[RMDB]
RNA sequence: GGGAACGACUCGAGUAGAGUCGAAAAGGUACCAAUGGUUUGACGAUGAUCCAGUGUAAGCAUCUGAUCACUAGUCAAACUACGGUUCAGGCCGAUUGGCCGGAGGUACAACCACUCUGGUGGAAACGUAUAUACUAAUAUUCGUAUUAGUAUAUACAAAAGAAACAACAACAACAAC
Reactivity to DMS in 0.01 (KOAc 150mM, MgCl2 10mM, bicine 150mM(pH8.5), 24C), signal-to-noise 9, nucleotides 027 to 126: g010g020u000a020c000c010a140a170u020g000g000u000u000u000g000a000c000g010a150u010g000a000u000c120c090a020g010u000g010u020a140a150g010c200a130u020c010u000g010a030u000c000a040c070u000a190g010u000c000a000a000a010c000u000a050c180g010g020u030u010c100a090g010g010c000c000g020a200u040u050g010g020c000c000g000g010a080g000g000u000a020c060a130a130c020c030a060c030u010c120u030g010g020u000g000g010a070a090a080c190
Reactivity to 2A3 in 0.01 (KOAc 150mM, MgCl2 10mM, bicine 150mM(pH8.5), 24C), signal-to-noise 9, nucleotides 027 to 126: g100g010u050a020c010c010a020a110u290g020g010u010u000u000g020a020c030g020a080u020g000a010u050c170c120a030g010u020g030u140a120a090g120c030a080u090c010u010g000a000u000c010a020c120u110a070g000u000c000a000a000a000c000u010a010c020g030g000u030u120c050a040g050g020c010c030g220a300u140u300g050g000c000c010g000g030a030g010g030u110a070c040a070a050c050c010a050c020u090c080u150g080g030u070g090g000a110a040a010c070

The record gives the reactivity of an RNA of 177 nucleotides to DMS and 2A3. DMS adducts were read by reverse transcription with MarathonRT. The DMS profile rests on 48,841 reads. It was measured as part of the RMDB library OK1LIB.